[RMDB]
RNA sequence: GGGAACGACUCGAGUAGAGUCGAAAACGUUUUAUUCUUUAUAUCCAUCGUUUCUUAGAGCCGUAAUUGUGCUGAUAUCAAUACCAGGGAAGGACACACAGCAAACAUUUGCUGGAUCCACGUCACAGUAAUGCUUCCGUUUCGACGGAAGCAUUACAAAAGAAACAACAACAACAAC
Reactivity to 2A3 in 0.01 (KOAc 150mM, MgCl2 10mM, bicine 150mM(pH8.5), 24C), signal-to-noise 2, nucleotides 027 to 126: c010g000u050u030u050u130a100u120u040c130u110u150u030a160u070a040u050c060c020a070u070c090g060u010u040u030c040u080u130a070g000a010g100c020c040g040u050a050a090u070u100g000u010g020c020u000g050a020u050a010u050c070a090a010u030a120c030c040a040g050g000g100a050a040g020g000a000c010a000c000a010c020a130g000c000a000a020a100c080a220u060u080u060g020c030u010g010g000a010u000c000c000a080c100g020u020c040a050c000a070
Reactivity to DMS in 0.01 (KOAc 150mM, MgCl2 10mM, bicine 150mM(pH8.5), 24C), signal-to-noise 2, nucleotides 027 to 126: c070g000u000u000u000u000a040u040u040c020u000u000u000a130u010a100u030c040c030a090u000c050g010u010u000u000c040u000u000a080g010a050g000c000c010g100u040a160a100u000u020g040u000g000c030u000g000a010u010a060u010c080a040a110u000a070c090c030a080g030g000g010a070a140g080g010a100c190a140c190a270c010a070g010c010a030a030a100c170a040u020u000u000g010c000u010g000g000a140u000c160c040a070c080g040u000c120a040c140a110
Chemical mapping of a 177-nucleotide RNA with 2A3 and DMS. DMS adducts were read by reverse transcription with MarathonRT. It was measured as part of the RMDB libraries RFM100 and RFMREP.